[RMDB]
RNA sequence: GGGAACGACUCGAGUAGAGUCGAAAAUCGAGAGUCUCUUCCCUGCCUCCGCGGUUCUUCUUCGAUUCCGAGCGGCUCAUCUCGGCAAGAGGCGGCGAUCCUCAGUACUCUUACUCUUUUCUUUUGAAAGAGGAGACUGCUGGAUCCGCCGCCCGAGGUCGAGUAAUUAGUUCGCUAAUUACUCGACAAAAGAAACAACAACAACAAC
Reactivity to DMS in 0.01 (KOAc 150mM, MgCl2 10mM, bicine 150mM(pH8.5), 24C), signal-to-noise 1, nucleotides 027 to 156: u000c020g030a200g000a150g000u010c020u010c030u010u000c020c000c010u000g000c060c010u010c060c030g000c060g060g040u000u010c050u010u000c050u000u000c040g010a170u010u000c030c010g040a100g050c110g010g030c060u000c020a150u010c000u010c020g020g000c090a170a160g010a170g000g010c000g030g020c040g000a030u000c020c010u000c030a050g010u000a140c110u010c030u010u020a300c010u000c010u000u010u010u000c150u020u020u000u010g010a020a020a040g000a050g060g010a080g000a080c050u000g010c130u000g010g020a060u010c120c050g090c010c000g030c000c000c000g000a130g030
Reactivity to 2A3 in 0.01 (KOAc 150mM, MgCl2 10mM, bicine 150mM(pH8.5), 24C), signal-to-noise 4, nucleotides 027 to 156: u130c060g010a020g000a000g120u020c020u000c000u080u040c000c000c010u000g010c010c010u050c030c050g030c050g060g030u080u000c010u150u040c020u080u110c060g120a110u130u030c030c010g010a030g010c040g080g000c020u000c010a100u060c020u010c000g010g010c040a080a020g050a110g070g000c000g010g000c000g000a000u000c010c000u000c000a040g030u120a300c080u020c030u100u160a270c010u030c030u080u280u170u080c090u110u300u150u300g040a020a000a000g000a000g010g010a000g000a000c000u020g050c070u020g010g000a000u000c000c170g000c000c000g000c000c000c000g010a010g030